[RMDB]
RNA sequence: GGGAACGACUCGAGUAGAGUCGAAAAGCGUACUACUGAGCGCUAACACUCGCAACAGCGUAAUAUGGCCUUCUUCCCAAAUAGGAAGAAGGUAUUACGACAUGCGAGUGGACCCGCUCAGUAUCGCAAAAUACCAUUAGCUUCGGCUAAUGGUAAAACAAGUCUUGUGAUUCGUCACAAGACUUGUAAAAGAAACAACAACAACAAC
Reactivity to 2A3 in 0.01 (KOAc 150mM, MgCl2 10mM, bicine 150mM(pH8.5), 24C), signal-to-noise 5, nucleotides 027 to 156: g000c010g040u120a070c050u010a000c000u020g000a000g010c010g020c010u060a100a020c010a000c000u010c010g000c000a040a160c050a250g070c010g030u020a010a010u080a140u220g300g020c000c000u000u000c000u010u020c010c010c020a180a300a150u230a090g000g000a000a000g000a000a000g010g000u000a000u000u000a000c000g080a100c010a040u040g010c000g000a000g000u000g000g000a010c000c000c000g000c000u030c000a000g000u000a000u000c000g000c000a030a000a020a060u070a010c000c000a000u000u000a000g010c000u020u030c300g060g000c000u000a000a000u010g000g000u010a020a000a000
Reactivity to DMS in 0.01 (KOAc 150mM, MgCl2 10mM, bicine 150mM(pH8.5), 24C), signal-to-noise 3, nucleotides 027 to 156: g040c020g060u000a060c110u000a040c000u000g000a010g030c000g020c010u000a090a300c020a010c000u000c010g070c010a070a120c140a200g010c030g030u010a010a040u000a120u010g130g040c030c000u000u010c010u010u000c000c000c000a040a200a290u030a060g000g030a010a030g030a010a000g070g040u000a000u000u000a030c010g000a060c020a300u010g020c000g030a020g010u010g010g010a070c220c270c010g000c000u000c000a030g010u000a000u000c010g000c020a060a060a100a160u000a020c010c000a010u000u000a020g010c010u000u000c300g060g030c000u010a000a010u000g000g040u010a010a010a090